[RMDB]
The record gives the reactivity of an RNA of 177 nucleotides to DMS and 2A3.
The reactions ran in a buffer of 150 mM KOAc, 10 mM MgCl2 and 150 mM bicine (pH 8.5), at 24 C.
For DMS, 9,781 sequencing reads were counted.
Reactivities are given for positions 27 through 126.
RNA sequence: GGGAACGACUCGAGUAGAGUCGAAAAGAUAUGGAUAUUCCACGCCCACUUUGAUCUAGUUUCGGAAACGAAACUAGGGAGUGGACGUGGAGAUAUCCUAAGUCAAACAUAUCGUUCGCGAUAUGAAGUUCAUUUAUUUCUUCGGAAAUAAAUGAACAAAAGAAACAACAACAACAAC
Reactivity to DMS in 0.01 (KOAc 150mM, MgCl2 10mM, bicine 150mM(pH8.5), 24C), signal-to-noise 6, nucleotides 027 to 126: g010a040u000a300u010g000g000a000u000a010u000u000c000c000a000c000g010c010c000c010a010c000u000u000u020g000a080u010c010u000a010g010u000u000u010c000g000g000a140a120a260c000g010a010a000a000c000u000a000g000g000g000a000g030u000g010g010a010c000g020u000g000g000a010g010a010u000a000u000c000c000u000a030a130g010u000c030a160a140a300c020a020u000a010u000c000g010u010u020c290g030c020g020a020u000a000u000g010a110a160
Reactivity to 2A3 in 0.01 (KOAc 150mM, MgCl2 10mM, bicine 150mM(pH8.5), 24C), signal-to-noise 5, nucleotides 027 to 126: g050a020u100a060u220g000g000a000u000a020u040u000c000c000a000c010g000c010c040c000a010c020u300u210u110g140a130u080c000u010a010g000u000u000u020c020g000g070a090a070a090c010g000a010a000a000c010u010a000g000g020g000a000g000u000g000g010a010c010g000u010g000g000a000g000a000u000a000u000c000c000u000a080a010g060u010c060a100a060a070c000a010u010a010u010c020g040u090u080c300g000c010g210a000u000a000u040g130a100a030